[RMDB]
RNA sequence: GGGAACGACUCGAGUAGAGUCGAAAAAUUUAAAAGCCAGGACGGUCACCUUUGGGGUGGUGACAAGUGUGAUCACUUGGGUGGUGGCUGUGUUUGCGUGUCUCCCAGGAAUCUCGUUUACCAGAUCGCCCUGGUAUCAUUUCGAUGAUACCAGGGCAAAAGAAACAACAACAACAAC
Reactivity to 2A3 in 0.01 (KOAc 150mM, MgCl2 10mM, bicine 150mM(pH8.5), 24C), signal-to-noise 2, nucleotides 027 to 126: a000u130u190u070a090a130a000a000g010c000c010a000g000g090a000c010g000g000u000c000a010c000c060u060u140u230g040g000g040g000u020g010g060u010g030a000c030a020a030g300u300g000u000g210a080u130c000a010c040u050u070g170g000g060u020g000g060u050g000g040c000u000g030u000g000u060u020u000g070c040g020u050g000u000c000u000c120c000c000a010g070g000a070a060u040c060u040c070g090u000u000u050a160c020c000a080g000a150u130c030